Overview: An RNA of 177 nucleotides, treated with 2A3 and DMS and read out base by base. It was measured as part of the RMDB library RFMREP. High DMS reactivity at an A or C suggests that its Watson-Crick edge is free. For DMS the reverse transcriptase was MarathonRT.
RNA sequence: GGGAACGACUCGAGUAGAGUCGAAAAAUACAUGCAAGUCGAGCGAAUGGAUUAAGAGCUUGCUCUUAUGAAGUUAGCGGCGGACGGGUGAGUAACACGUGGGUAACCUGCCCAUAAGACUGGGAUAGGAAAAGAGUAUGUUCGCAUACUCUUUUCCAAAAGAAACAACAACAACAAC
Reactivity to 2A3 in 0.01 (KOAc 150mM, MgCl2 10mM, bicine 150mM(pH8.5), 24C), signal-to-noise 2, nucleotides 027 to 126: a000u020a020c010a010u090g090c030a040a040g040u050c030g050a020g030c020g040a020a010u020g000g010a000u050u010a010a020g010a000g030c060u150u100g030c000u040c000u000u040a030u040g010a000a020g020u000u030a010g040c050g300g170c020g040g020a010c010g000g000g020u030g020a030g020u090a050a030c020a000c180g040u040g020g040g000u020a040a080c010c010u030g000c000c000c020a030u060a070a060g040a030c060u020g030g000g070a070u160a150
Reactivity to DMS in 0.01 (KOAc 150mM, MgCl2 10mM, bicine 150mM(pH8.5), 24C), signal-to-noise 3, nucleotides 027 to 126: a080u000a060c090a060u000g010c050a090a090g000u000c030g010a300g020c010g000a040a020u000g000g000a140u000u010a000a000g010a030g020c020u020u000g010c000u000c010u000u000a010u000g010a300a150g000u000u000a080g020c010g000g000c060g010g000a030c020g040g020g000u000g010a140g020u000a050a040c110a080c110g010u000g000g000g000u000a070a090c080c050u000g000c020c000c000a020u010a050a070g000a080c120u010g000g000g010a120u010a100